RNA sequence: GGGAACGACUCGAGUAGAGUCGAAAAGCCAACUUUCGAAUCUGAAGAAUUGAUCAAACUUACCGGGAAAUUGAUCGAACAAGAUAAACACUUGGUUCCUCAAGGUAAUGGUUACUCAUUAUACAUAUCACGAUUAUGGAUUCGUCCAUAAUCGUGAAAAAGAAACAACAACAACAAC
Reactivity to 2A3 in 0.01 (KOAc 150mM, MgCl2 10mM, bicine 150mM(pH8.5), 24C), signal-to-noise 3, nucleotides 027 to 126: g040c000c000a030a030c050u080u160u140c100g060a070a080u040c030u110g050a090a040g020a180a170u100u080g010a010u010c000a020a020a060c070u120u110a100c050c060g090g020g080a030a130a190u040u040g010a020u010c010g020a020a040c020a030a000g010a030u070a060a140a000c060a000c030u010u030g000g000u060u040c000c000u070c050a040a040g040g000u020a040a010u030g030g040u040u060a060c080u090c090a020u040u030a070u020a080c080a080u170a030
Reactivity to DMS in 0.01 (KOAc 150mM, MgCl2 10mM, bicine 150mM(pH8.5), 24C), signal-to-noise 3, nucleotides 027 to 126: g000c010c020a070a100c130u000u000u000c130g010a150a070u010c080u000g000a120a130g000a090a100u010u000g000a030u000c000a020a020a100c090u000u000a070c120c070g010g020g020a050a110a070u000u000g000a020u000c010g030a040a070c040a080a000g010a060u000a080a090a130c200a040c060u000u010g000g010u000u000c000c020u010c140a090a060g000g010u000a000a050u000g000g000u000u020a110c120u010c000a010u000u000a020u000a050c190a080u010a110